[RMDB]
RNA sequence: GGGAACGACUCGAGUAGAGUCGAAAAAGUGGAGGAUCUACGGAUCCUCCACAGUCUCGCCGCCUGAACCUUUCGUCUCAACCUCUAUGCCGGGCAGGUGAGCAAAGUUUCAGGUGUGCGAGCGGAACUUCACCAUAUUUUUCGAAAUAUGGUGAAGAAAAGAAACAACAACAACAAC
Reactivity to 2A3 in 0.01 (KOAc 150mM, MgCl2 10mM, bicine 150mM(pH8.5), 24C), signal-to-noise 9, nucleotides 027 to 126: a000g000u000g000g000a010g000g000a000u010c020u020a070c300g050g000a000u000c010c000u000c000c000a000c000a000g000u010c000u000c000g000c000c000g000c000c000u010g000a000a010c000c010u040u050u070c130g210u110c030u020c020a170a300c020c000u060c020u100a130u250g130c080c040g050g040g000c130a010g000g000u000g000a000g000c000a000a000a000g000u000u000u000c000a000g030g000u010g030u080g000c000g000a000g000c000g030g020a060a040
Reactivity to DMS in 0.01 (KOAc 150mM, MgCl2 10mM, bicine 150mM(pH8.5), 24C), signal-to-noise 6, nucleotides 027 to 126: a070g010u000g000g000a020g020g000a010u000c000u010a120c210g010g000a000u000c000c000u000c000c000a000c000a010g010u010c000u000c000g000c010c010g000c000c000u000g000a010a010c050c000u000u000u000c220g000u030c000u000c000a070a070c010c000u010c060u020a100u020g010c070c080g000g000g020c300a030g010g020u000g010a010g000c010a020a000a010g000u000u000u000c000a010g000g010u000g000u030g020c000g000a010g000c030g010g010a100a150
An RNA of 177 nucleotides, treated with 2A3 and DMS and read out base by base. The RNA was probed in 150 mM KOAc, 10 mM MgCl2 and 150 mM bicine (pH 8.5) at 24 C.